[RMDB]
RNA sequence: GGGAACGACUCGAGUAGAGUCGAAAACGGGUGGGUUCACAUCCCCAACCCGCGGGCCGGCUGUUCUUCUUUUCCUUUGCUCGUCUUCCCCGGUCAGCCUCCCGAGUUCCUCUUCUUCUUCCCUGCUCCCGCCUUCAGUUCGCUGAAGGCAAAAGAAACAACAACAACAAC
Reactivity to 2A3 in 0.01 (KOAc 150mM, MgCl2 10mM, bicine 150mM(pH8.5), 24C), signal-to-noise 9, nucleotides 027 to 129: c010g000g010g010u030g010g030g030u130u150c130a060c020a200u170c020c000c000c010a040a220c010c000c000g010c030g010g020g000c020c030g010g020c030u050g050u090u040c020u040u020c010u030u060u030u060c010c010u070u060u090g040c020u040c040g050u000c030u020u030c020c000c000c000g010g020u050c020a020g020c000c010u040c000c010c000g010a020g020u050u030c000c010u020c000u050u000c000u020u000c000u010u020c010c000c000u010g020c020u020c000c010c010
Reactivity to DMS in 0.01 (KOAc 150mM, MgCl2 10mM, bicine 150mM(pH8.5), 24C), signal-to-noise 9, nucleotides 027 to 129: c030g000g020g010u020g000g040g010u050u040c210a070c180a160u020c100c010c010c040a050a050c050c020c000g050c060g020g020g000c060c050g000g000c080u000g000u040u030c070u030u020c040u010u030u020u020c030c020u030u010u030g030c000u010c040g000u020c000u030u030c000c000c010c070g030g000u020c030a100g020c050c000u020c030c020c030g000a110g030u000u000c010c010u010c000u010u000c010u000u010c050u000u000c000c000c000u030g040c030u000c030c010c030
Record summary:
The record gives the reactivity of an RNA of 170 nucleotides to 2A3 and DMS. DMS adducts were read by reverse transcription with MarathonRT. Source: RMDB library 15KLIB, as collected in RNAgym. For DMS, 81,612 sequencing reads were counted. 2A3 adducts were read by reverse transcription with SuperScript II with manganese.